[RMDB]
RNA sequence: GGGAACGACUCGAGUAGAGUCGAAAACUGUGGAGGUUAAAGGGAAGAGAGCCAAUGUUUCCUUUUUGUUUUAAAAUUAACUGAUUAAUUUUACAGAUACGGUCUUGCUCUGUUGCCCAGGCUGGAGUGUGGUGGCAUGAUCAUAGGUCACUAUAAACCUAAUAUGCAUAUUCGUAUGCAUAUUAGGAAAAGAAACAACAACAACAAC
Reactivity to DMS in 0.01 (KOAc 150mM, MgCl2 10mM, bicine 150mM(pH8.5), 24C), signal-to-noise 3, nucleotides 027 to 156: c080u000g030u010g020g000a070g040g030u010u000a060a070a090g000g020g010a160a070g010a080g010a070g000c030c040a080a140u000g000u000u000u000c010c020u000u000u000u000u000g000u000u000u000u000a030a030a060a030u000u000a020a300c090u000g000a150u000u010a010a030u010u010u020u000a060c080a060g010a100u000a030c070g020g010u000c040u010u000g000c020u000c040u010g020u010u010g000c030c030c040a090g000g010c030u000g010g000a090g030u000g020u010g010g010u010g000g000c020a060u000g020a090u000c060a120u010a080g010g020u000c020a050c050u000a110u000a040a070a170
Reactivity to 2A3 in 0.01 (KOAc 150mM, MgCl2 10mM, bicine 150mM(pH8.5), 24C), signal-to-noise 4, nucleotides 027 to 156: c040u040g040u100g070g020a040g000g040u110u180a160a090a060g040g010g010a030a020g020a010g010a000g040c030c050a050a040u060g010u020u070u080c000c000u060u060u030u070u070g050u030u110u050u090a060a080a050a050u050u040a060a050c040u080g060a170u080u110a070a050u060u050u030u100a040c020a030g070a070u040a080c050g020g000u020c020u020u010g010c010u000c010u070g090u080u030g040c000c000c010a020g010g000c020u030g010g020a030g020u060g010u020g030g000u010g010g000c020a010u060g000a000u060c000a020u070a090g030g040u030c000a000c070u100a060u170a250a040a020
This 207-nucleotide RNA was probed chemically with DMS and 2A3. It was measured as part of the RMDB library OK3TST. The reactions ran in a buffer of 150 mM KOAc, 10 mM MgCl2 and 150 mM bicine (pH 8.5), at 24 C.